[RMDB]
RNA sequence: GGGAACGACUCGAGUAGAGUCGAAAAAUUUCGAGCGUAAUCGCGUCUUGACUAGACUGUAGGUGACGUGAGUAGGGAUGUAUCCCAGUGUGCAUAGCGCACAAUACGCUGAUCUACAGUCAUUUAAUCACUAGUUUACGUUCGCGUAAACUAGUGAAAAAGAAACAACAACAACAAC
Reactivity to 2A3 in 0.01 (KOAc 150mM, MgCl2 10mM, bicine 150mM(pH8.5), 24C), signal-to-noise 5, nucleotides 027 to 126: a010u130u140u090c040g010a010g020c020g000u050a080a140u060c030g000c000g030u010c030u090u120g070a050c040u060a050g000a000c000u000g010u020a000g000g060u040g050a020c020g020u020g030a060g060u140a140g020g000g000a020u110g150u290a120u060c000c020c010a020g020u030g000u000g010c090a170u140a250g050c020g010c020a000c000a010a020u110a030c020g010c050u030g030a030u020c000u000a000c000a000g000u000c000a020u050u070u040a070a040
Reactivity to DMS in 0.01 (KOAc 150mM, MgCl2 10mM, bicine 150mM(pH8.5), 24C), signal-to-noise 4, nucleotides 027 to 126: a120u010u000u000c020g010a030g010c030g010u010a070a070u000c060g010c040g000u000c010u010u010g010a140c200u010a100g000a010c000u000g010u000a000g040g010u000g010a060c030g010u000g000a100g010u010a080g000g000g010a030u020g010u010a100u000c000c000c010a130g000u000g020u000g000c000a120u010a140g030c160g000c010a010c000a050a140u000a080c010g010c060u010g010a050u000c020u000a000c000a020g000u010c010a070u000u000u000a080a130
The data come from the RNA Mapping Database (RMDB), library M2PK90. An RNA of 177 nucleotides, treated with 2A3 and DMS and read out base by base. The reactions ran in a buffer of 150 mM KOAc, 10 mM MgCl2 and 150 mM bicine (pH 8.5), at 24 C. The 2A3 profile rests on 6,313 reads. For DMS the reverse transcriptase was MarathonRT.